[RMDB]
Chemical mapping of a 207-nucleotide RNA with 2A3 and DMS. The data come from the RNA Mapping Database (RMDB), library M2RFPK. For 2A3 the reverse transcriptase was SuperScript II with manganese.
RNA sequence: GGGAACGACUCGAGUAGAGUCGAAAACACAAUUCUCUAAGCGAUGAGAAGCGUGCGGAAAAUUAGGGAAGGGCUACGGCUAUAAUCCUAAGAAAGCUUAUCUACAAGCGGAGGUAUUCUCAGAACGAAAACCAUUUGGCGUUCGCGCCAAAUGGAACUCAUUGUAUGUCUUCGGACAUACAAUGAGAAAAGAAACAACAACAACAAC
Reactivity to 2A3 in 0.01 (KOAc 150mM, MgCl2 10mM, bicine 150mM(pH8.5), 24C), signal-to-noise 3, nucleotides 027 to 156: c090a000c020a020a100u120u030c020u010c010u070a210a060g070c040g070a130u090g020a050g040a060a040g020c060g030u140g030c070g050g000a150a080a030a090u040u050a070g000g020g040a110a060g070g000g000c020u060a010c140g050g000c010u010a020u060a170a040u080c010c010u010a040a020g040a090a080a000g020c010u060u070a050u130c010u070a120c040a110a010g020c020g010g000a020g000g040u070a090u070u030c040u000c020a040g070a140a050c070g070a050a070a020a070c000c000a000u000u000u000g000g010c010g040u050u020c190g000c000g000c080c020a000a000a000u000g000g000a000a000
Reactivity to DMS in 0.01 (KOAc 150mM, MgCl2 10mM, bicine 150mM(pH8.5), 24C), signal-to-noise 1, nucleotides 027 to 156: c020a120c050a040a260u000u000c020u010c000u040a140a220g040c100g060a250u000g010a060g000a020a060g000c280g000u000g000c000g000g000a080a090a100a180u000u000a020g000g000g000a110a170g000g030g030c060u000a060c140g080g030c010u000a060u000a060a090u000c020c020u000a040a080g000a100a080a150g010c040u000u000a050u000c080u010a190c060a040a050g000c110g010g020a070g030g000u000a110u000u000c060u000c040a140g020a030a110c060g000a090a110a090a140c000c000a030u040u000u000g000g020c000g010u000u040c300g070c010g000c000c000a000a050a000u000g020g010a000a010